[RMDB]
RNA sequence: GGGAACGACUCGAGUAGAGUCGAAAAGAUAUGGACACCCGUAGACAUGAGCCACCAUCGGAAACGAUGGCGGCUCAACAGCUACCGGUGUCCUAAGUCAAACGAGUAAUGGUUCGCCAUUACUCGAUCACACGUGAUUGUUCGCAAUCACGUGUGAAAAAGAAACAACAACAACAAC
Reactivity to 2A3 in 0.01 (KOAc 150mM, MgCl2 10mM, bicine 150mM(pH8.5), 24C), signal-to-noise 1, nucleotides 027 to 126: g010a000u000a010u060g000g000a010c020a010c010c000c020g000u010a000g030a040c200a300u300g000a000g000c000c000a010c010c030a020u000c000g040g000a000a000a020c000g000a010u010g000g010c010g000g000c000u010c000a000a000c030a000g000c000u000a000c000c040g000g000u020g000u030c000c020u000a010a000g000u000c010a040a050a090c030g000a010g030u010a010a000u010g070g070u080u200c300g080c180c000a000u000u000a000c020u020c010g000a110
Reactivity to DMS in 0.01 (KOAc 150mM, MgCl2 10mM, bicine 150mM(pH8.5), 24C), signal-to-noise 2, nucleotides 027 to 126: g020a010u000a020u020g000g000a030c000a020c000c020c210g020u000a000g000a020c220a120u020g000a030g010c000c000a040c000c000a020u000c000g020g000a000a000a050c010g020a020u000g010g000c040g000g040c000u010c010a010a010c160a140g020c010u000a000c000c300g000g020u000g020u010c000c000u010a000a030g000u000c000a130a170a210c020g010a010g010u000a000a000u000g000g030u010u010c270g040c010c000a020u010u000a000c000u000c000g000a070